Chemical mapping of a 177-nucleotide RNA with 2A3 and DMS. Conditions: 150 mM KOAc, 10 mM MgCl2 and 150 mM bicine (pH 8.5), 24 C. 2A3 adducts were read by reverse transcription with SuperScript II with manganese.
RNA sequence: GGGAACGACUCGAGUAGAGUCGAAAAUCAGGUGUCCUUCAACUUCUUAAUGUGGAAAUUCAGAACUUCGGGUCACCAUUGUACUCAUCUGUUGAAUUCAGUAAUGUGUCAGCAGGAUCCUGGAUCACACAUGUCCCAUCUUCGGAUGGGACAUGUGAAAAGAAACAACAACAACAAC
Reactivity to 2A3 in 0.01 (KOAc 150mM, MgCl2 10mM, bicine 150mM(pH8.5), 24C), signal-to-noise 1, nucleotides 027 to 126: u090c010a070g100g000u010g000u000c010c070u110u140c040a060a040c030u040u030c020u070u050a130a100u050g030u030g300g130a070a100a140u010u000c000a020g010a070a040c010u060u090c060g000g000g040u000c000a030c010c010a010u000u180g030u080a050c010u040c080a090u060c040u030g000u030u040g080a180a260u160u010c090a100g040u100a160a200u100g050u000g040u020c010a000g050c000a000g010g010a000u050c010c030u040g120g040a060u110c040a090
Reactivity to DMS in 0.01 (KOAc 150mM, MgCl2 10mM, bicine 150mM(pH8.5), 24C), signal-to-noise 1, nucleotides 027 to 126: u000c160a100g040g000u000g020u000c020c000u020u000c200a110a060c160u000u000c060u010u010a080a050u000g000u020g020g000a060a090a030u000u000c080a020g000a010a020c110u020u000c250g050g000g050u000c020a040c050c000a120u000u000g010u010a080c180u100c080a100u000c050u000g010u000u000g000a080a110u020u010c010a070g000u000a070a080u000g010u000g000u000c010a020g020c050a040g000g010a030u000c010c050u000g000g020a080u020c090a170